This 207-nucleotide RNA was probed chemically with 2A3. Source: RMDB library OK3TST, as collected in RNAgym. The RNA was probed in 150 mM KOAc, 10 mM MgCl2 and 150 mM bicine (pH 8.5) at 24 C. Values are in units of 0.01, from 0 to 300, in steps of 10. The 2A3 profile rests on 663 reads.
[RMDB]
RNA sequence: GGGAACGACUCGAGUAGAGUCGAAAACAGCGCAGGGCAGCAAGAAGGCUUUCAUCCGCGGCAAGAAGGUCGCCCUGGUCGAGAUGAACGAGAAACUGCCAGGGUGGCGGGCCGCCGUUGAGGCAGCCGCCCGACUCGCCGCCGGCCCAACAUGGGCACAUCCGAUCGUAUUCGUACGAUCGGAUGUAAAAGAAACAACAACAACAAC
Reactivity to 2A3 in 0.01 (KOAc 150mM, MgCl2 10mM, bicine 150mM(pH8.5), 24C), signal-to-noise 1, nucleotides 027 to 156: c030a000g030c020g040c000a070g050g040g050c000a020g030c060a060a050g110a120a030g160g030c010u110u200u090c000a060u000c000c010g000c010g030g030c000a030a090g050a040a040g300g000u010c010g040c000c020c000u020g030g000u050c070g080a030g000a300u120g040a080a150c160g040a050g220a230a100a010c040u020g000c000c020a000g000g000g000u000g020g040c000g000g090g000c000c000g000c000c000g000u040u030g030a050g000g000c020a000g000c010c000g020c000c000c000g000a020c070u100c080g000c000c000g000c020c040g070g010c000c000c000a050a130c200a160u240g000g000g000c020